[RMDB]
RNA sequence: GGGAACGACUCGAGUAGAGUCGAAAAGAUAUGGACGGUAUUGUCAGAGAUGUCCGUCCCGAAGAACAGAUUCGGAAACGAAUCUGGGAGGGACGGCAUCUCUUGGAUUUAUACCGUCCUAAGUCAAAACGAAUCCCGUGUUCGCACGGGAUUCGAACUUUUCCUGUAUGUUCGCAUACAGGAAAAGAAAAGAAACAACAACAACAAC
Reactivity to 2A3 in 0.01 (KOAc 150mM, MgCl2 10mM, bicine 150mM(pH8.5), 24C), signal-to-noise 2, nucleotides 027 to 156: g040a050u080a050u110g000g000a000c000g000g000u000a000u000u010g000u000c000a000g000a000g000a010u000g230u170c010c010g000u010c000c000c000g210a210a030g010a050a010c000a010g000a010u000u000c000g030g000a040a070a080c000g000a000a000u020c000u000g000g000g010a030g010g000g000a000c000g020g000c010a000u020c000u010c000u000u020g010g000a000u000u300u010a020u010a010c010c000g000u000c000c000u000a010a000g000u000c010a000a030a040a030c000g010a000a000u000c040c010c040g000u030g030u010u110c290g000c040a010c000g010g020g010a000u010u000c000g000a000a000